[RMDB]
RNA sequence: GGGAACGACUCGAGUAGAGUCGAAAAGAAAGAGCAUGAGAAUAAAUUGUCAUAACGGCUGGUCAGUUUUUUCAAGGCAAUGGCCAAAUCACUGCGUUGCUCUGCCGAAAGGUCUUCCAGGCGCAAAGUAGUACGAAAAUUUCGAUUUUCGUACUACAAAAGAAACAACAACAACAAC
Reactivity to DMS in 0.01 (KOAc 150mM, MgCl2 10mM, bicine 150mM(pH8.5), 24C), signal-to-noise 5, nucleotides 027 to 126: g010a070a110a080g010a040g000c020a050u000g000a130g000a070a060u000a040a070a060u000u000g010u010c030a060u000a080a090c110g000g010c080u000g020g010u000c030a040g010u000u000u000u000u000u000c060a060a110g000g000c030a050a060u010g000g000c050c120a040a080a080u010c070a040c110u000g000c040g000u000u000g010c010u010c010u010g000c050c020g000a060a060a080g010g010u000c070u010u000c020c020a110g010g000c050g020c110a060a070a100
Reactivity to 2A3 in 0.01 (KOAc 150mM, MgCl2 10mM, bicine 150mM(pH8.5), 24C), signal-to-noise 3, nucleotides 027 to 126: g020a010a090a000g040a000g000c030a030u100g040a030g080a180a020u180a110a070a050u130u070g050u050c020a010u060a180a020c060g080g030c030u040g030g020u030c010a030g030u010u010u030u030u090u100c040a030a010g010g000c020a050a130u110g090g020c020c020a020a070a000u100c040a040c070u040g000c030g020u020u040g000c000u010c010u020g020c010c000g030a070a030a040g000g010u010c000u020u010c010c000a010g040g000c010g000c030a010a030a040
The record gives the reactivity of an RNA of 177 nucleotides to DMS and 2A3. The DMS profile rests on 5,304 reads. The data come from the RNA Mapping Database (RMDB), library OK2TST. The RNA was probed in 150 mM KOAc, 10 mM MgCl2 and 150 mM bicine (pH 8.5) at 24 C.